[RMDB]
RNA sequence: GGGAACGACUCGAGUAGAGUCGAAAAGGAACGGUAGAAAAGAGCGAGCCUCUCGAUACGAAAGGGCCGCGAGCCUAUCGAGUUUGGAGUCAUCCGGGCCGAAGGGUUGAGACGCACCCACAGACGGGAGUAACAAUCAGUUCGCUGAUUGUUACUCAAAAGAAACAACAACAACAAC
Reactivity to 2A3 in 0.01 (KOAc 150mM, MgCl2 10mM, bicine 150mM(pH8.5), 24C), signal-to-noise 1, nucleotides 027 to 126: g100g000a050a000c010g000g010u060a040g130a030a170a100a010g040a010g000c050g030a020g030c050c000u000c030u040c040g060a060u050a250c050g030a120a040a000g050g010g000c000c030g110c050g010a040g040c000c010u050a050u010c000g000a000g040u000u090u150g040g000a030g010u040c020a070u030c050c000g010g020g000c000c000g050a070a080g030g010g000u040u090g010a030g010a040c060g010c010a000c020c070c010a010c020a030g170a020c060g160g000
Reactivity to DMS in 0.01 (KOAc 150mM, MgCl2 10mM, bicine 150mM(pH8.5), 24C), signal-to-noise 1, nucleotides 027 to 126: g020g010a030a040c030g000g030u030a050g000a060a020a130a110g000a190g000c000g010a120g030c000c010u000c050u010c030g000a110u010a070c130g010a080a050a120g000g000g000c000c020g000c110g000a060g000c010c020u000a060u000c010g000a060g000u030u000u010g040g010a090g010u040c150a040u010c050c090g000g000g010c020c040g010a080a300g010g000g000u000u000g000a080g020a090c000g000c180a070c030c010c010a080c120a080g010a130c120g010g000